[RMDB]
RNA sequence: GGGAACGACUCGAGUAGAGUCGAAAACGCCAACGACGAGCGUUUCGCUCUAGCCGCUUAAGGCUGGGCCACUGCACUAAUUUGUCUUUGGGUUAGGUAGGGCAACCUACAGCAGUGUUAUUUACAAAGAAUCGAAUCGGUCUGCGCCACGAAGUCCGUAUUGCAUCGGGUUCGCCCGAUGCAAUACAAAAGAAACAACAACAACAAC
Reactivity to 2A3 in 0.01 (KOAc 150mM, MgCl2 10mM, bicine 150mM(pH8.5), 24C), signal-to-noise 1, nucleotides 027 to 156: c030g030c020c020a180a080c110g190a020c020g060a170g070c020g000u020u020u080c030g010c010u030c000u100a000g030c020c010g070c180u290u250a140a000g000g030c000u000g000g000g010c000c000a010c000u000g010c000a020c080u000a010a000u010u000u000g040u000c000u020u020u070g010g000g010u000u020a010g000g000u000a010g040g000g000c030a060a060c010c000u000a000c020a010g000c020a000g010u010g100u240u100a210u040u210u030a070c020a030a000a000g000a000a070u080c090g070a060a030u070c050g060g040u020c030u160g020c090g030c050c020a070c080g030a010a000g000u010c070c030